[RMDB]
RNA sequence: GGGAACGACUCGAGUAGAGUCGAAAAAGUAAGAAACAUGUAGAAGUUUUUACUGAUGGUAAGCUUAAUUGUAGUUUCCAGGACGCUGCCUCUAAUAUCUUUGUUAUUAACAAGGACACUUAUGCAGAUACACUCGAGUUCGCUCGAGUGAAAAGAAACAACAACAACAAC
Reactivity to DMS in 0.01 (KOAc 150mM, MgCl2 10mM, bicine 150mM(pH8.5), 24C), signal-to-noise 5, nucleotides 027 to 129: a000g000u030a070a040g030a010a000a000c000a080u040g050u060a120g040a050a040g020u010u040u000u040u020a050c000u000g000a090u020g010g010u060a000a000g040c000u000u000a040a130u010u000g030u070a050g030u000u000u000c020c070a110g040g020a070c170g030c050u010g010c030c030u000c020u020a020a000u000a180u020c000u010u010u010g000u000u100a130u060u090a040a020c010a000a020g020g010a000c110a060c270u000u000a020u060g030c000a000g010a080u060a130
Reactivity to 2A3 in 0.01 (KOAc 150mM, MgCl2 10mM, bicine 150mM(pH8.5), 24C), signal-to-noise 7, nucleotides 027 to 129: a000g100u100a060a010g080a080a060a010c080a090u240g050u220a060g090a300a050g010u010u020u010u020u040a040c010u020g100a140u080g020g020u020a010a020g000c010u010u060a020a010u140u080g050u080a040g040u030u050u010c000c010a020g050g020a020c070g000c040u000g000c010c000u010c010u000a010a020u020a040u060c000u030u010u000g030u040u060a290u220u180a080a000c000a000a000g000g000a000c000a000c110u020u010a010u100g020c000a000g010a030u090a050
Annotation:
An RNA of 170 nucleotides, treated with DMS and 2A3 and read out base by base. 2A3 adducts were read by reverse transcription with SuperScript II with manganese. The RNA was probed in 150 mM KOAc, 10 mM MgCl2 and 150 mM bicine (pH 8.5) at 24 C.